[RMDB]
RNA sequence: GGGAACGACUCGAGUAGAGUCGAAAACGCUGGGUAUAACAUGAGUCGCGACGAAGUAUAGGUUGCCUUACCUGAAGCGCGCACGGGUAAUAAGCUAUACAGAGCGAUACUCAUGUUAUACCUGUGCUGAAGCGCGCACGGCAACCGAAAGGUGCGAGUGAAUGUACAUGUUCGCAUGUACAUUCACAAAAGAAACAACAACAACAAC
Reactivity to 2A3 in 0.01 (KOAc 150mM, MgCl2 10mM, bicine 150mM(pH8.5), 24C), signal-to-noise 8, nucleotides 027 to 156: c030g000c010u030g010g000g000u000a000u000a000a000c010a000u000g010a000g050u070c020g010c030g080a300c120g100a300a040g010u010a010u010a010g130g150u100u240g100c020c020u010u000a000c010c000u030g040a220a060g010c010g000c000g000c010a010c010g000g020g000u010a020a040u170a280a050g040c000u000a000u000a010c020a030g090a020g060c010g020a020u100a030c000u000c000a000u000g000u000u000a000u000a000c000c000u000g000u010g000c010u030g010a090a020g010c000g000c000g000c000a010c010g030g000c020a040a060c010c010g040a060a030a030g010g000u020g000c020g010a040
Reactivity to DMS in 0.01 (KOAc 150mM, MgCl2 10mM, bicine 150mM(pH8.5), 24C), signal-to-noise 2, nucleotides 027 to 156: c080g010c040u010g040g000g030u000a010u000a050a070c000a030u000g020a020g010u000c040g010c010g000a300c090g000a160a180g020u000a030u000a000g010g030u000u000g000c130c220u000u010a000c020c010u010g020a050a040g000c060g010c010g030c020a300c060g000g010g100u000a020a100u000a050a140g000c030u000a040u000a030c000a190g020a300g000c040g000a040u000a080c030u000c000a020u000g000u010u000a010u000a000c000c000u000g000u000g010c020u000g010a070a060g000c000g030c020g020c020a300c050g010g020c010a060a080c030c020g040a040a100a150g000g030u000g030c030g000a170
Annotation:
This 207-nucleotide RNA was probed chemically with 2A3 and DMS. DMS adducts were read by reverse transcription with MarathonRT. The reactions ran in a buffer of 150 mM KOAc, 10 mM MgCl2 and 150 mM bicine (pH 8.5), at 24 C.